[RMDB]
RNA sequence: GGGAACGACUCGAGUAGAGUCGAAAAAAAAGAUAUGGACGCUGCAUGGCGCGAGGAUCGAUCGUAACAUCGCAUCGGAAACGAUGCGUGGAUCGGGAGCGUCUGUGAUGGCGUCCUAAGUCAAAAACGAACACUAAUAGUUCGCUAUUAGUGUUCGAAAAGAAACAACAACAACAAC
Reactivity to DMS in 0.01 (KOAc 150mM, MgCl2 10mM, bicine 150mM(pH8.5), 24C), signal-to-noise 5, nucleotides 027 to 126: a050a050a100a100g010a020u000a200u010g000g000a010c010g030c000u000g010c040a050u010g030g000c010g010c010g010a070g030g010a050u010c010g000a010u000c000g020u000a040a050c200a010u000c010g010c000a010u000c010g000g000a060a030a060c010g010a000u000g010c000g040u000g000g000a000u000c000g000g000g000a030g030c000g020u000c000u010g020u000g000a110u020g010g020c010g010u000c000c010u000a000a070g000u010c030a070a050a050a090a140
Reactivity to 2A3 in 0.01 (KOAc 150mM, MgCl2 10mM, bicine 150mM(pH8.5), 24C), signal-to-noise 4, nucleotides 027 to 126: a000a000a000a000g040a010u050a020u080g010g000a000c010g010c050u210g030c040a080u270g040g010c000g000c010g060a300g020g010a010u010c010g010a000u000c020g030u040a050a030c020a230u230c020g000c000a000u000c000g010g000a010a030a010c010g010a010u000g000c000g000u000g000g000a000u000c010g010g010g000a020g000c010g010u020c040u010g040u030g070a300u290g120g000c000g000u010c000c000u000a000a000g000u010c000a000a010a000a100a140
Source information
The record gives the reactivity of an RNA of 177 nucleotides to DMS and 2A3. 2A3 adducts were read by reverse transcription with SuperScript II with manganese. For DMS, 13,806 sequencing reads were counted. DMS (dimethyl sulfate) methylates the pairing face of unpaired adenines and cytosines. The RNA was probed in 150 mM KOAc, 10 mM MgCl2 and 150 mM bicine (pH 8.5) at 24 C.